Annotation: The record gives the reactivity of an RNA of 177 nucleotides to 2A3 and DMS. Source: RMDB library RFM100, as collected in RNAgym.

RNA sequence: GGGAACGACUCGAGUAGAGUCGAAAAAACUUUUGAUAUUAGUUUUUAUGGGUAUUUGCACUCUGGUCAGGAGAGCUGAGUACGGAAGCUCCAUUAAUCAGCCACCAAGCUCAGGUUUGGAUGCUCGUGGAUCCAGUUAGUUCGCUAACUGGAUCCAAAAAGAAACAACAACAACAAC
Reactivity to 2A3 in 0.01 (KOAc 150mM, MgCl2 10mM, bicine 150mM(pH8.5), 24C), signal-to-noise 1, nucleotides 027 to 126: a000a020c090u140u120u060u040g030a000u030a070u260u070a050g000u080u000u030u000u060a050u130g030g000g000u030a000u020u000u270g050c020a030c000u190c000u000g040g070u140c000a010g000g020a100g000a000g180c000u000g000a000g080u020a030c070g020g020a070a070g010c080u020c030c000a000u050u120a180a040u020c030a010g030c010c010a080c000c000a020a000g000c000u000c010a010g000g120u020u090u000g000g000a000u030g020c000u000c000g030
Reactivity to DMS in 0.01 (KOAc 150mM, MgCl2 10mM, bicine 150mM(pH8.5), 24C), signal-to-noise 1, nucleotides 027 to 126: a040a000c020u000u000u000u000g000a170u050a150u010u010a070g000u030u000u000u000u090a040u050g010g000g070u050a070u010u010u010g000c010a060c020u010c000u000g000g020u010c090a240g000g000a070g010a070g020c000u020g020a100g000u000a090c200g030g030a180a090g000c120u020c040c050a110u000u020a010a060u000c090a050g010c020c050a040c050c040a020a130g010c030u000c070a050g020g000u000u020u000g020g010a080u020g000c020u000c090g040
For DMS, 1,550 sequencing reads were counted.